Chemical mapping of a 177-nucleotide RNA with 2A3 and DMS. For DMS, 7,864 sequencing reads were counted.
[RMDB]
RNA sequence: GGGAACGACUCGAGUAGAGUCGAAAAAGAUAGUCUGGGGACAGCCUGGGCAUGCAUCAAGACCUCAUAUAGCAGUUUUUAGAUCUAUCAGGCACAUCUAAGACCACAACUCCUGGCCACAGCAUCAGUGUAGUUAUUCAUUCGUGAAUAACUACACAAAAGAAACAACAACAACAAC
Reactivity to 2A3 in 0.01 (KOAc 150mM, MgCl2 10mM, bicine 150mM(pH8.5), 24C), signal-to-noise 4, nucleotides 027 to 126: a000g050a050u090a010g020u000c030u040g030g010g040g050a130c030a040g040c020c010u010g020g010g000c050a020u060g010c010a060u050c040a050a030g030a090c020c020u060c060a060u190a020u080a180g050c070a040g010u000u010u050u070u150a080g000a060u030c040u060a060u080c050a030g050g000c030a020c010a060u020c020u060a070a000g020a040c010c000a030c030a060a060c010u010c000c010u020g020g030c020c010a060c010a040g030c010a060u090c060a060
Reactivity to DMS in 0.01 (KOAc 150mM, MgCl2 10mM, bicine 150mM(pH8.5), 24C), signal-to-noise 6, nucleotides 027 to 126: a090g000a090u000a050g010u000c020u010g000g000g000g010a120c150a070g010c040c030u000g010g010g010c060a050u010g000c090a060u000c080a060a100g000a110c060c030u000c080a070u000a090u010a090g010c080a060g010u010u010u000u000u000a070g010a050u010c040u000a070u000c050a050g010g010c050a080c100a050u000c040u010a050a070g020a070c020c030a040c090a050a070c070u000c020c010u000g010g010c030c030a030c090a060g010c090a050u010c100a110
Conditions: 150 mM KOAc, 10 mM MgCl2 and 150 mM bicine (pH 8.5), 24 C.